[RMDB]
RNA sequence: GGGAACGACUCGAGUAGAGUCGAAAAGGAGAGCGGCGCCUAUGACUCGCGCCGGCGACGAUGCACAGCGAAGCGAUGAGGAGGAGCGGCGCCUAUGACUCGCGCCAGCGACGAUGCACAGCGAAGCCGAUAAGGGCUAGUUCGCUAGCCCUUAUCGAAAAGAAACAACAACAACAAC
Reactivity to 2A3 in 0.01 (KOAc 150mM, MgCl2 10mM, bicine 150mM(pH8.5), 24C), signal-to-noise 8, nucleotides 027 to 126: g130g040a050g010a010g090c030g030g000c010g010c010c010u230a230u240g080a120c020u020c070g000c000g000c020c000g010g020c010g000a070c050g030a070u160g020c070a030c030a070g040c040g050a080a020g010c010g060a090u120g060a070g050g030a020g020g030a040g010c030g020g000c020g000c000c010u160a180u200g060a070c020u020c070g000c010g010c020c010a050g000c010g030a070c030g020a050u100g020c050a030c000a030g040c030g040a050a000g040c010
Reactivity to DMS in 0.01 (KOAc 150mM, MgCl2 10mM, bicine 150mM(pH8.5), 24C), signal-to-noise 5, nucleotides 027 to 126: g010g010a130g010a140g010c080g020g000c030g010c020c040u000a110u040g000a160c090u010c120g000c030g000c040c020g000g000c030g010a110c050g000a080u030g000c050a120c100a100g000c030g000a100a120g010c030g000a070u000g000a070g000g040a120g000g000a200g000c050g000g010c010g000c010c050u000a050u030g000a160c090u010c140g000c020g000c020c020a060g010c020g000a080c050g000a120u060g030c050a020c110a110g000c040g020a050a130g000c080
Description: Source: RMDB library OK1LIB, as collected in RNAgym. Structure probing data (2A3 and DMS) for a 177-nucleotide construct. The DMS profile rests on 10,916 reads. Conditions: 150 mM KOAc, 10 mM MgCl2 and 150 mM bicine (pH 8.5), 24 C.